[RMDB]
Description: Source: RMDB library 15KLIB, as collected in RNAgym. An RNA of 170 nucleotides, treated with 2A3 and DMS and read out base by base. The 2A3 profile rests on 25,665 reads. The reactions ran in a buffer of 150 mM KOAc, 10 mM MgCl2 and 150 mM bicine (pH 8.5), at 24 C. 2A3 adducts were read by reverse transcription with SuperScript II with manganese. 2A3 is a SHAPE reagent: it acylates the 2'-hydroxyl of flexible nucleotides of all four kinds. Reactivities are rounded to 0.1 and cut off at 0 and 3.
RNA sequence: GGGAACGACUCGAGUAGAGUCGAAAAUUUAUACAGCAUGUUCACACGCAGCUGUUGAUGCUUUGUGUGAAAAAGCUUUUAAAUAUUUGAACAUUGCUAAAUGUUCCCGUAUCAUUCCUGCAAAGGCUCAGCUCUACGUUCGCGUAGAGCAAAAGAAACAACAACAACAAC
Reactivity to 2A3 in 0.01 (KOAc 150mM, MgCl2 10mM, bicine 150mM(pH8.5), 24C), signal-to-noise 9, nucleotides 027 to 129: u010u010u020a050u020a040c080a000g010c010a020u240g070u030u000c000a000c000a000c010g030c010a010g000c010u070g130u300u220g090a070u190g000c000u010u030u050g000u000g000u000g000a010a000a000a030a010g000c000u020u010u010u020a050a070a020u140a090u080u060u080g020a020a000c020a050u030u130g060c080u170a090a050a020u050g000u000u000c000c010c010g020u040a050u120c070a090u060u070c000c010u020g030c040a060a080a090g050g000c020u030c050a030
Reactivity to DMS in 0.01 (KOAc 150mM, MgCl2 10mM, bicine 150mM(pH8.5), 24C), signal-to-noise 5, nucleotides 027 to 129: u030u040u000a030u020a000c180a000g070c010a060u030g030u020u010c040a050c000a010c040g010c100a000g020c000u030g000u110u120g040a110u060g030c030u020u020u060g020u020g030u060g070a020a030a010a060a110g020c040u000u000u000u000a010a000a000u000a100u050u010u050g050a070a030c060a000u000u000g000c140u000a010a000a000u040g010u010u010c020c000c050g020u040a080u000c060a130u010u050c040c020u000g060c190a050a050a090g040g000c080u040c090a100